[RMDB]
The data come from the RNA Mapping Database (RMDB), libraries RFM100 and RFMREP. Structure probing data (DMS and 2A3) for a 177-nucleotide construct.
RNA sequence: GGGAACGACUCGAGUAGAGUCGAAAACUCUCUUAAAACCCAUGUUUUCAAUGAGGAAUUUGUGGUAAUAACUGGAGAGGCUACGUAAUUAGUUAAUAGGAAUUUAGAAAAAAGCUUCCGGAAUCUGCGUAUAACAAGGUUUCGACCUUGUUAUACGAAAAGAAACAACAACAACAAC
Reactivity to DMS in 0.01 (KOAc 150mM, MgCl2 10mM, bicine 150mM(pH8.5), 24C), signal-to-noise 4, nucleotides 027 to 126: c010u000c010u020c030u000u010a070a080a150a120c300c010c000a050u010g000u000u000u000u010c020a160a110u000g010a200g000g010a030a020u000u000u010g000u070g010g000u000a060a090u010a100a140c190u040g010g000a040g020a070g010g010c060u010a070c100g010u010a060a050u020u000a090g000u010u010a050a080u020a160g020g000a020a030u010u010u020a080g000a000a050a110a080a100a100g000c140u010u000c020c010g000g010a080a070u020c060u000g010
Reactivity to 2A3 in 0.01 (KOAc 150mM, MgCl2 10mM, bicine 150mM(pH8.5), 24C), signal-to-noise 7, nucleotides 027 to 126: c000u000c000u000c000u050u120a010a090a040a050c000c000c020a020u030g040u010u050u020u060c170a240a170u300g060a180g170g040a040a030u060u070u100g070u100g010g000u060a090a060u060a190a070c070u060g010g000a020g000a010g030g000c040u010a030c060g080u060a100a090u090u090a090g050u030u130a080a060u080a150g050g050a040a050u070u130u110a220g130a050a180a010a010a030a000g020c030u020u000c010c010g000g040a060a040u010c020u060g010